The data come from the RNA Mapping Database (RMDB), library OK2TST. The record gives the reactivity of an RNA of 177 nucleotides to 2A3 and DMS. DMS adducts were read by reverse transcription with MarathonRT. For DMS, 3,029 sequencing reads were counted. Values are in units of 0.01, from 0 to 300, in steps of 10. The RNA was probed in 150 mM KOAc, 10 mM MgCl2 and 150 mM bicine (pH 8.5) at 24 C.
RNA sequence: GGGAACGACUCGAGUAGAGUCGAAAAACAAGAUUGGAUUAAAAGAUCAUGGCUCUUCUGGGAUCCGUAACAGUUUCAGACUGGCACAUGCAGUUUCUGUAUGCAGGAUUAUAUACUUACUGAUUGCCCAAUAAUGUGACUUCGGUCACAUUAUUGGAAAAGAAACAACAACAACAAC
Reactivity to 2A3 in 0.01 (KOAc 150mM, MgCl2 10mM, bicine 150mM(pH8.5), 24C), signal-to-noise 3, nucleotides 027 to 126: a000c050a030a030g040a140u090u200g100g020a040u120u300a070a100a060a060g050a040u080c020a030u060g030g020c010u010c000u130u020c010u020g010g030g040a010u010c030c010g020u030a070a060c020a060g020u030u090u080c040a070g010a040c020u010g050g000c020a030c010a080u070g000c040a010g030u030u120u080c020u050g010u040a040u090g000c000a040g020g030a020u220u000a070u060a010u010a110c040u080u030a030c000u020g100a120u070u120g020c030
Reactivity to DMS in 0.01 (KOAc 150mM, MgCl2 10mM, bicine 150mM(pH8.5), 24C), signal-to-noise 3, nucleotides 027 to 126: a110c100a100a090g010a080u000u010g010g010a110u010u000a060a100a110a140g000a070u010c050a050u000g020g010c030u000c040u010u000c030u000g000g000g010a030u010c050c070g000u000a060a100c150a050g010u000u000u000c090a090g010a060c050u000g000g000c070a120c070a030u000g000c060a030g000u000u010u010c030u010g010u000a030u000g010c080a060g000g000a090u000u000a060u000a080u000a090c090u000u000a090c090u000g010a140u000u000g000c180